[RMDB]
RNA sequence: GGGAACGACUCGAGUAGAGUCGAAAAUGCUCAUCAAUCAGCGGCAGCCCCAUUAGCAGAAACAUUGGAAGAGGCUUGGCAGCGGCUGUUUAUUGGUCCAUAUGCCUUGCCAGCGCCGCCUUGGGGACGUCGUAUGACUGUUCGCAGUCAUACGACGAAAAGAAACAACAACAACAAC
Reactivity to 2A3 in 0.01 (KOAc 150mM, MgCl2 10mM, bicine 150mM(pH8.5), 24C), signal-to-noise 1, nucleotides 027 to 126: u100g000c010u040c050a050u050c040a080a130u060c040a020g010c000g000g000c010a050g050c000c030c000c000a020u110u170a000g050c160a030g160a070a130a060c070a090u070u110g000g050a110a000g060a100g090g000c000u010u010g000g000c000a000g010c000g070g000c000u020g050u100u220u110a100u070u170g040g000u030c000c000a130u170a050u300g020c000c000u000u000g000c000c010a000g000c040g010c010c000g060c020c020u010u050g020g000g030g000a000
Reactivity to DMS in 0.01 (KOAc 150mM, MgCl2 10mM, bicine 150mM(pH8.5), 24C), signal-to-noise 2, nucleotides 027 to 126: u020g010c030u010c020a100u000c120a120a050u000c110a040g000c000g020g000c030a100g040c040c170c000c020a020u000u000a070g000c030a100g000a120a050a110c100a140u020u000g000g000a140a060g000a300g100g030c000u010u010g030g050c000a020g020c110g000g040c000u030g030u000u010u020a120u010u020g020g030u000c010c100a100u020a300u000g000c000c020u020u000g010c050c000a100g000c080g010c010c090g000c000c040u020u020g010g010g000g010a180